[RMDB]
RNA sequence: GGGAACGACUCGAGUAGAGUCGAAAAUAUGGCUUCAGGGUGGGGGUUUCUUAGCCAGUCUGCGCUUUGAGGGCUCAAGCGACGAAAUGUUGCUCAAUCUGAGAUACAGUGCUAAGGAUUUUUUAAGCCCAAUAUAUGUGUUCGCACAUAUAUUGGGAAAAGAAACAACAACAACAAC
Reactivity to DMS in 0.01 (KOAc 150mM, MgCl2 10mM, bicine 150mM(pH8.5), 24C), signal-to-noise 4, nucleotides 027 to 126: u010a120u010g010g010c060u000u000c090a080g010g000g030u000g010g000g010g000g010u000u000u010c020u000u000a070g000c030c070a150g010u000c050u010g020c110g020c060u000u000u000g010a130g010g010g020c050u000c160a080a040g000c030g010a030c050g000a070a100a110u010g010u010u010g000c010u000c060a080a100u010c100u000g000a060g000a100u010a060c080a070g020u000g000c020u010a040a080g010g000a020u000u000u020u010u010u010a090a170g000
Reactivity to 2A3 in 0.01 (KOAc 150mM, MgCl2 10mM, bicine 150mM(pH8.5), 24C), signal-to-noise 3, nucleotides 027 to 126: u110a030u030g010g030c030u120u130c090a040g010g090g000u130g020g010g000g020g060u010u080u030c010u020u050a010g020c000c010a010g020u030c030u060g020c030g000c040u070u010u090g040a040g010g000g000c010u010c080a000a030g030c000g030a030c020g040a190a120a170u230g000u050u080g000c000u010c000a140a190u050c080u100g020a010g000a050u060a070c020a010g020u020g030c010u020a010a030g060g020a100u140u000u030u000u010u090a070a040g020
Source information
Chemical mapping of a 177-nucleotide RNA with DMS and 2A3. It was measured as part of the RMDB library OK2TRN. For DMS the reverse transcriptase was MarathonRT. For 2A3, 2,956 sequencing reads were counted.